[RMDB]
RNA sequence: GGGAACGACUCGAGUAGAGUCGAAAAGUCUGUGCGUUUCCAUUUGAGUAUCCUGAAAACGGGCUUUUCAGCAUGGAACGUACAUAUUAAAGAGUAGGAGUGCAUAGUGGCCCGUAUAGCAGGCAUUGAGGCGAGGAUUGUUUCGACAAUCCUCGAAUCAUGCUCAACACUUCGGUGUUGAGCAUGAAAAAGAAACAACAACAACAAC
Reactivity to 2A3 in 0.01 (KOAc 150mM, MgCl2 10mM, bicine 150mM(pH8.5), 24C), signal-to-noise 4, nucleotides 027 to 156: g080u040c030u010g010u000g030c010g010u020u150u060c010c010a030u100u050u060g050a060g030u130a110u130c000c020u040g040a050a010a040a050c080g060g020g000c020u070u090u050u070c040a020g030c050a030u020g000g010a020a000c000g010u010a000c000a000u020a020u000u210a120a110a010g060a000g010u050a040g010g060a040g030u050g030c040a040u070a130g080u090g040g010c000c000c000g010u060a050u020a110g010c030a000g020g000c020a020u060u150g090a060g010g060c020g000a000g010g000a000u000u010g000u020u080u080c100g040a010c000a000a010u010c000c010u000c000g000a000a000
Reactivity to DMS in 0.01 (KOAc 150mM, MgCl2 10mM, bicine 150mM(pH8.5), 24C), signal-to-noise 2, nucleotides 027 to 156: g040u010c080u000g000u000g040c000g000u000u000u000c000c020a130u000u040u010g020a160g010u020a070u000c090c000u000g010a100a030a090a190c010g030g010g030c100u010u010u020u000c050a130g000c080a040u000g030g050a040a040c020g000u000a020c020a060u000a030u000u010a060a090a140g010a140g040u000a110g020g040a100g000u010g000c000a120u000a140g030u000g000g010c000c020c030g000u000a080u000a160g020c000a050g000g000c020a120u010u010g000a140g010g010c030g000a030g040g030a030u000u000g000u000u000u010c230g010a120c020a000a020u000c000c000u000c000g000a010a060
Source information: Chemical mapping of a 207-nucleotide RNA with 2A3 and DMS. The reactions ran in a buffer of 150 mM KOAc, 10 mM MgCl2 and 150 mM bicine (pH 8.5), at 24 C.